[RMDB]
Structure probing data (2A3 and DMS) for a 177-nucleotide construct.
RNA sequence: GGGAACGACUCGAGUAGAGUCGAAAAAAUUCACGCAUUAAUUGGAGUGUCAUAUACUCAGAUACUUUCGCCCCGUCGGUUUGUUGACUAUAAGCAGCAAUACGGCGAUAACCAUAAAAUUUAAAGGAGAAACUGUGUUAUUCGUAACACAGUUUCUAAAAGAAACAACAACAACAAC
Reactivity to 2A3 in 0.01 (KOAc 150mM, MgCl2 10mM, bicine 150mM(pH8.5), 24C), signal-to-noise 2, nucleotides 027 to 126: a000a000u190u060c030a010c080g020c050a100u120u150a070a110u150u230g090g000a000g010u020g070u040c070a020u110a010u030a230c010u070c060a000g020a010u110a010c010u050u040u100c050g020c000c020c000c000g040u000c040g030g080u060u060u060g000u000u000g030a050c050u010a020u040a300a120g050c000a000g030c000a000a000u040a220c010g040g010c000g010a040u020a010a020c010c010a050u170a140a060a210a300u290u220u150a000a030a050g080g040
Reactivity to DMS in 0.01 (KOAc 150mM, MgCl2 10mM, bicine 150mM(pH8.5), 24C), signal-to-noise 2, nucleotides 027 to 126: a070a070u000u000c030a040c100g030c080a080u020u000a050a080u020u000g000g010a070g010u000g000u000c100a100u000a140u000a070c100u010c130a050g010a070u000a050c080u000u000u030c120g030c030c030c060c050g030u000c000g000g000u000u000u000g020u000u000g040a060c050u000a150u020a140a130g000c010a010g030c000a030a010u000a230c020g000g000c000g000a100u000a070a120c140c080a050u010a080a030a080a120u000u000u000a080a050a170g020g000
For DMS, 833 sequencing reads were counted.